[RMDB]
The data come from the RNA Mapping Database (RMDB), library OK2TRN. Structure probing data (DMS) for a 177-nucleotide construct.
RNA sequence: GGGAACGACUCGAGUAGAGUCGAAAAGUGACUUGAGAGGCCUAGCCUAUCAAUACUGCCAAAAAAGCUAAGAUAGUCCUUGAAUCCAACUCCUUGUGCAAAAGGGACGACUGAAGACAGGUGCUGGAAAGGGACGUACAUUCGUGUACGUCCCUUUAAAAGAAACAACAACAACAAC
Reactivity to DMS in 0.01 (KOAc 150mM, MgCl2 10mM, bicine 150mM(pH8.5), 24C), signal-to-noise 2, nucleotides 027 to 126: g030u000g010a050c100u000u000g010a110g000a060g000g020c020c090u000a160g010c030c020u000a050u010c020a000a040u010a060c090u000g000c050c040a010a060a050a130a170a080g010c060u010a070a110g010a060u010a120g000u020c020c010u000u000g010a160a090u000c020c030a070a060c130u000c000c030u010u000g030u000g000c190a050a080a100a060g000g020g010a040c170g010a080c070u000g010a090a040g020a160c050a040g010g000u000g000c050u000g010g010

Values cover nucleotides 27 to 126. The DMS profile rests on 1,416 reads. The RNA was probed in 150 mM KOAc, 10 mM MgCl2 and 150 mM bicine (pH 8.5) at 24 C.